The record gives the reactivity of an RNA of 177 nucleotides to DMS and 2A3. 2A3 is a SHAPE reagent: it acylates the 2'-hydroxyl of flexible nucleotides of all four kinds.
RNA sequence: GGGAACGACUCGAGUAGAGUCGAAAACGCAUCGCCCGCCUUCCGCUUAAGGAGCCCGACCAACCCUUGUGAUUGGCGUGGGGGGGCGCUAACGUAACUGUCUGUAACGUUCGAUACAGAACUGGCGGCGAGGAUAACGUUUCGACGUUAUCCUCGCAAAAGAAACAACAACAACAAC
Reactivity to DMS in 0.01 (KOAc 150mM, MgCl2 10mM, bicine 150mM(pH8.5), 24C), signal-to-noise 1, nucleotides 027 to 126: c000g000c260a220u000c010g050c000c040c000g020c000c000u000u010c300c000g030c090u050u000a050a040g080g000a020g000c120c050c050g000a060c050c050a150a100c000c000c000u020u000g010u060g000a150u000u030g000g000c100g030u000g000g000g000g040g000g000g000c000g050c050u000a050a170c020g000u000a110a120c030u000g000u020c040u050g000u040a030a080c020g010u050u100c050g000a140u000a030c020a000g000a000a100c220u010g030g000c240g000
Reactivity to 2A3 in 0.01 (KOAc 150mM, MgCl2 10mM, bicine 150mM(pH8.5), 24C), signal-to-noise 3, nucleotides 027 to 126: c020g000c020a040u020c020g010c000c000c050g150c030c000u020u090c020c010g000c040u080u150a040a000g000g030a030g060c050c030c020g180a140c000c030a000a040c000c000c000u120u130g190u110g150a290u120u100g000g010c030g000u180g000g000g010g000g000g000g020c020g000c000u070a130a000c040g040u050a040a110c080u080g050u090c020u040g100u050a020a000c040g020u040u110c020g130a000u070a130c050a020g110a130a020c000u110g070g000c030g020
For DMS, 1,025 sequencing reads were counted.